[RMDB]
RNA sequence: GGGAACGACUCGAGUAGAGUCGAAAAAGAGAUCGUGACAUCGUAGACCUAUGGCUUAGAUUGAUGACCUCCAUUGCACUUUGGAGGGGUGCCUGCCUAAAGUCUGCCCAAGUGGUCGAGCCUACACAGCCUACCGGCUAUUCGUAGCCGGUAGGCUAAAAGAAACAACAACAACAAC
Reactivity to 2A3 in 0.01 (KOAc 150mM, MgCl2 10mM, bicine 150mM(pH8.5), 24C), signal-to-noise 1, nucleotides 027 to 126: a010g160a010g000a020u000c010g000u010g000a000c060a200u010c030g070u110a000g000a000c060c060u070a210u120g030g000c000u070u030a010g000a150u010u200g000a030u180g120a040c000c000u000c000c000a010u080u160g070c050a010c180u150u070u110g010g010a000g000g000g000g000u030g100c000c000u010g000c000c000u050a070a070a070g000u000c000u000g000c000c000c000a090a130g010u060g000g050u000c000g000a000g000c000c000u120a010c000a000c060